[RMDB]
RNA sequence: GGGAACGACUCGAGUAGAGUCGAAAAAAUAGAUUUGUAAAGAAGGUAUACAAACGGCAAUCGUAUCACCAACAAGCUUUGGUACAGUUACCUUUAAAAGUAUUCCGUUUGUCAACGGCAGCUCGCAAAUACCAUCCCUAUUCGUAGGGAUGGUAUUAAAAGAAACAACAACAACAAC
Reactivity to 2A3 in 0.01 (KOAc 150mM, MgCl2 10mM, bicine 150mM(pH8.5), 24C), signal-to-noise 6, nucleotides 027 to 126: a000a000u270a060g100a100u140u130u140g060u140a070a090a030g100a080a010g080g020u050a090u010a110c030a020a050a000c000g040g060c130a060a050u120c030g050u050a010u120c050a010c060c010a020a030c070a140a060g070c090u100u030u030g030g000u090a070c060a120g010u060u060a030c020c000u040u110u140a070a150a020a010g070u040a130u020u100c010c020g000u000u020u080g060u040c040a030a010c000g030g010c020a030g020c030u030c070g050c040a000
Reactivity to DMS in 0.01 (KOAc 150mM, MgCl2 10mM, bicine 150mM(pH8.5), 24C), signal-to-noise 6, nucleotides 027 to 126: a060a030u030a040g010a130u010u010u010g010u010a070a080a120g010a070a040g000g010u010a070u040a020c020a030a050a040c040g000g000c240a050a060u010c080g020u000a030u010c080a080c130c050a030a040c120a080a090g010c160u030u010u010g000g010u010a070c130a090g010u010u010a040c020c030u010u000u030a040a070a070a110g010u010a030u020u000c000c000g000u000u010u010g020u010c150a040a040c050g000g010c140a070g000c030u000c060g000c130a050

Structure probing data (2A3 and DMS) for a 177-nucleotide construct. Conditions: 150 mM KOAc, 10 mM MgCl2 and 150 mM bicine (pH 8.5), 24 C. For 2A3 the reverse transcriptase was SuperScript II with manganese. Reactivities are given for positions 27 through 126.